[RMDB]
RNA sequence: GGGAACGACUCGAGUAGAGUCGAAAAGCCGAUGAAUUGCCGAGAAGCCUGGCUCGAAAUCGUCGACGCAUCCACGACGGUCCUGCCAUGAGACCGUAACGAGGACAUGUCGCCUCGAAUGGCGUCGUAUAACAUGAGUGGUUCGCCACUCAUGUAACCUAAGUUGAAUAUUCGUAUUCAACUUAGGAAAAGAAACAACAACAACAAC
Reactivity to DMS in 0.01 (KOAc 150mM, MgCl2 10mM, bicine 150mM(pH8.5), 24C), signal-to-noise 4, nucleotides 027 to 156: g020c010c000g010a050u000g010a070a060u000u010g020c080c000g010a080g010a110a130g020c080c070u000g010g020c000u000c030g000a050a060a040u010c030g030u000c000g010a030c020g020c150a130u000c010c010a070c040g000a100c000g010g010u000c000c020u000g020c040c300a140u000g000a030g000a020c000c010g030u000a020a060c040g000a110g020g010a070c080a150u010g020u000c050g020c000c000u010c010g020a130a080u000g010g010c010g030u000c020g010u000a080u010a080a070c010a010u020g010a030g020u010g020g000u000u010c300g020c030c000a000c000u000c000a000u000g010u000a020a110
Reactivity to 2A3 in 0.01 (KOAc 150mM, MgCl2 10mM, bicine 150mM(pH8.5), 24C), signal-to-noise 9, nucleotides 027 to 156: g010c000c000g010a010u050g030a070a230u110u070g090c100c030g020a020g030a140a030g050c050c120u130g060g000c010u010c020g020a060a050a030u060c030g040u020c010g020a030c040g010c030a040u030c060c020a050c070g130a010c010g020g000u000c000c010u070g100c040c020a060u060g030a020g000a100c000c010g030u020a010a030c010g000a010g000g000a030c040a140u240g030u170c120g010c010c000u010c010g030a040a040u080g020g020c000g020u050c030g000u080a110u040a180a010c000a000u000g000a000g000u000g030g010u050u060c170g030c050c000a000c000u000c000a000u000g000u000a000a010